[RMDB]
RNA sequence: GGGAACGACUCGAGUAGAGUCGAAAAUCCAGAAUGUUCAAGCUUUGCGAUAGAGUGCCGAAUGGACUCGACGAGCUCAGAAAAUCCCUGGAGAAUCACAUCGCAAAGGAGGGUCACCAGGCGUUGAUAUACUAUGGCAUUUCGAUGCCAUAGUAUAAAAAGAAACAACAACAACAAC
Reactivity to 2A3 in 0.01 (KOAc 150mM, MgCl2 10mM, bicine 150mM(pH8.5), 24C), signal-to-noise 4, nucleotides 027 to 126: u030c010c000a000g120a130a140u210g030u160u140c060a080a020g050c020u070u070u070g020c030g020a050u030a080g070a040g030u160g270c020c030g150a170a200u300g020g010a020c000u000c010g020a040c060g040a020g000c000u030c040a020g100a050a090a030a040u020c000c010c020u030g030g030a030g050a060a030u080c020a020c010a150u020c010g000c010a040a040a020g050g060a050g020g020g000u030c000a020c070c010a020g050g000c050g080u040u110g020a020
Reactivity to DMS in 0.01 (KOAc 150mM, MgCl2 10mM, bicine 150mM(pH8.5), 24C), signal-to-noise 8, nucleotides 027 to 126: u000c010c000a180g000a130a090u010g000u010u010c090a140a120g000c010u000u000u000g020c030g000a050u000a150g010a030g020u000g010c020c020g010a160a100u010g020g000a060c030u000c020g000a130c120g000a080g000c030u000c060a110g000a080a060a080a090u010c060c020c010u000g010g010a070g000a090a080u000c050a120c110a070u000c020g000c030a020a030a060g010g010a080g010g000g010u000c050a100c040c020a050g010g020c140g000u000u000g000a170
Structure probing data (2A3 and DMS) for a 177-nucleotide construct.
The 2A3 profile rests on 3,498 reads.
Values are in units of 0.01, from 0 to 300, in steps of 10.
DMS adducts were read by reverse transcription with MarathonRT.
Reactivities are given for positions 27 through 126.
Source: RMDB library OK2TST, as collected in RNAgym.